[RMDB]
RNA sequence: GGGAACGACUCGAGUAGAGUCGAAAACUGUCGUUCUUCGGAACGACAGAAAGAACCCGUGGGUCACGCAAGGAGGAGCGUGUGGGACGCGACAAACCCAAAAAAGCGUUCGGUUCGCCGAACGCAACUGUAUAGUCCGGUUCGCCGGACUAUACAGAAAAGAAACAACAACAACAAC
Reactivity to 2A3 in 0.01 (KOAc 150mM, MgCl2 10mM, bicine 150mM(pH8.5), 24C), signal-to-noise 2, nucleotides 027 to 126: c000u000g000u000c000g000u000u000c000u050u020c170g060g000a000a000c000g010a000c000a000g020a000a010a000g020a040a050c000c000c020g030u060g000g020g020u040c040a010c030g020c040a060a070g040g030a030g020g010a050g070c010g000u030g020u040g050g040g020a040c020g030c020g060a050c090a020a070a120c000c000c000a090a060a040a020a010a040g000c000g000u000u000c010g000g020u030u050c240g010c070c000g000a000a000c010g000c000a000a010
Reactivity to DMS in 0.01 (KOAc 150mM, MgCl2 10mM, bicine 150mM(pH8.5), 24C), signal-to-noise 3, nucleotides 027 to 126: c010u000g010u000c010g000u000u000c000u000u000c140g010g000a010a000c000g010a020c000a010g000a010a050a080g000a150a180c030c000c030g040u010g000g000g010u000c060a030c050g000c070a080a090g010g030a210g010g000a060g010c040g040u000g020u010g000g010g000a090c040g000c070g010a060c100a080a100a080c030c000c000a010a040a060a100a110a060g000c010g040u000u000c000g000g020u010u010c210g010c010c000g000a020a010c000g010c000a020a040